The data come from the RNA Mapping Database (RMDB), library TTRDEL. Structure probing data (2A3 and DMS) for a 177-nucleotide construct. The 2A3 profile rests on 4,016 reads. For 2A3 the reverse transcriptase was SuperScript II with manganese. As a SHAPE reagent, 2A3 marks flexible, mostly unpaired nucleotides at the ribose 2'-OH.
[RMDB]
RNA sequence: GGGAACGACUCGAGUAGAGUCGAAAAGAUAUGGAGUUUGCGCCGGUGAAAUACGAACUACCUGAAGUUCGGAAACGAACUCCAGGCGGAGCAAACUCCUAAGUCAAAACUACUGUUCGCAGUAGAAGAUGCUACCUAUGUUCGCAUAGGUAGCAUCAAAAGAAACAACAACAACAAC
Reactivity to 2A3 in 0.01 (KOAc 150mM, MgCl2 10mM, bicine 150mM(pH8.5), 24C), signal-to-noise 2, nucleotides 027 to 126: g020a000u020a030u080g000g000a010g000u000u000u010g000c030g020c010c000g040g010u120g110a260a290a090u300a130c120g070a170a060c060u030a020c040c010u010g000a000a000g000u000u000c000g000g000a000a030a000c000g000a010a000c000u000c000c030a000g040g040c120g040g000a000g010c000a000a000a000c000u000c000c000u020a010a000g010u010c010a000a000a070a110c010u020a000c000u020g020u070u140c300g000c170a010g010u030a000g040a030a030
Reactivity to DMS in 0.01 (KOAc 150mM, MgCl2 10mM, bicine 150mM(pH8.5), 24C), signal-to-noise 2, nucleotides 027 to 126: g000a010u010a050u020g000g000a020g000u000u000u000g010c000g010c020c010g060g020u000g010a100a130a140u020a100c150g010a110a100c090u030a300c000c000u000g000a010a010g000u000u000c010g050g000a030a000a050c000g020a010a000c010u010c000c010a020g000g020c080g010g000a030g010c000a020a000a010c000u000c000c000u000a010a030g000u000c020a080a060a080a170c010u000a000c000u010g010u010u000c160g020c000a020g020u000a010g000a130a070